[RMDB]
RNA sequence: GGGAACGACUCGAGUAGAGUCGAAAACGAGGCGAUACGUCGCCUCAAGCUUGGUGCUUAGCUUCUUUCACCAAGCAUAUUACACGCGGAUAACCGCCAAAGGAGAAACACUGACUACGGUCAGUGAGGAAGUUGGUUCGGUUCGCCGAACCAACAACCCUUACGCUUACUUCGGUAAGCGUAAGGGAAAAGAAACAACAACAACAAC
Reactivity to 2A3 in 0.01 (KOAc 150mM, MgCl2 10mM, bicine 150mM(pH8.5), 24C), signal-to-noise 2, nucleotides 027 to 156: c060g000a000g000g010c000g000a000u040a030c200g150u020c000g000c000c000u000c000a000a000g000c000u000u000g000g000u030g000c030u090u030a070g080c030u030u020c000u040u070u010c000a000c000c000a000a000g000c010a010u020a020u070u210a080c080a020c060g040c020g000g010a090u070a170a300c000c020g000c020c010a020a040a000g030g000a030g000a020a100a000c010a000c000u010g000a000c000u040a010c130g110g000u020c010a000g000u010g000a020g030g040a090a050g010u000u010g000g010u000u000c000g000g090u060u040c130g010c140c000g000a000a000c000c000a000a000c000a000a000

Structure probing data (2A3) for a 207-nucleotide construct. The reactions ran in a buffer of 150 mM KOAc, 10 mM MgCl2 and 150 mM bicine (pH 8.5), at 24 C. It was measured as part of the RMDB library M2RFPK. For 2A3, 1,105 sequencing reads were counted.